[RMDB]
RNA sequence: GGGAACGACUCGAGUAGAGUCGAAAAGAUAUGGAGGUCUAUGGCCGAACAUCCGCGUCGGAAACGACGCCGAUGUCUAGACAGCCAUAGAGCCUCCUAAGUCAAAGACGUUUGUUCGCAAACGUCAGUUUCAGCUUAACUUCGGUUAAGCUGAAACAAAAGAAACAACAACAACAAC
Reactivity to 2A3 in 0.01 (KOAc 150mM, MgCl2 10mM, bicine 150mM(pH8.5), 24C), signal-to-noise 2, nucleotides 027 to 126: g020a030u040a020u120g010g000a000g000g000u000c020u000a020u010g050g000c110c220g090a090a010c010a000u000c000c020g030c000g030u020c000g020g010a000a020a010c000g010a000c000g000c010c010g000a010u000g000u000c000u070a130g080a190c130a040g000c000c000a000u000a000g030a020g020c010c000u000c000c000u000a010a010g000u010c010a000a050a180g000a000c020g010u000u030u000g050u050u130c300g000c290a010a000a010c000g000u010c010a000
Reactivity to DMS in 0.01 (KOAc 150mM, MgCl2 10mM, bicine 150mM(pH8.5), 24C), signal-to-noise 3, nucleotides 027 to 126: g000a040u000a180u000g010g000a020g010g010u000c000u000a000u000g010g000c010c060g010a160a010c000a000u020c010c300g020c000g010u010c000g010g000a070a030a120c010g000a010c000g040c000c200g010a020u000g010u000c100u010a100g020a220c300a080g000c010c000a000u000a000g000a120g010c000c010u000c000c000u000a000a080g010u000c030a090a130a150g010a000c000g010u000u000u000g010u000u000c240g030c020a010a010a010c000g010u000c000a050